An RNA of 177 nucleotides, treated with 2A3 and read out base by base. Reactivities are given for positions 27 through 126. The RNA was probed in 150 mM KOAc, 10 mM MgCl2 and 150 mM bicine (pH 8.5) at 24 C.
RNA sequence: GGGAACGACUCGAGUAGAGUCGAAAAGCCUGAAGAAUGGCUCCUCUGUUUACAACACACCCAACAGGAAGCUGGGGUCAUCGUGAUGAGGGGCACAAACUUGUGGCCUCCCUACAGACAAAUGCCCAGUCUCUUGGCAAUUCGUUGCCAAGAGACUAAAAGAAACAACAACAACAAC
Reactivity to 2A3 in 0.01 (KOAc 150mM, MgCl2 10mM, bicine 150mM(pH8.5), 24C), signal-to-noise 1, nucleotides 027 to 126: g000c000c000u020g180a030a000g010a010a010u020g000g000c000u040c030c000u000c050u050g110u050u270u150a100c110a170a030c000a020c000a000c020c000c000a170a070c000a140g000g110a130a000g050c050u010g010g000g020g000u000c050a050u150c050g000u020g040a090u020g000a010g000g030g000g000c050a000c000a190a040a000c000u010u070g060u020g000g000c000c000u020c020c010c000u050a020c040a140g110a000c010a010a050a050u110g030c000c070c000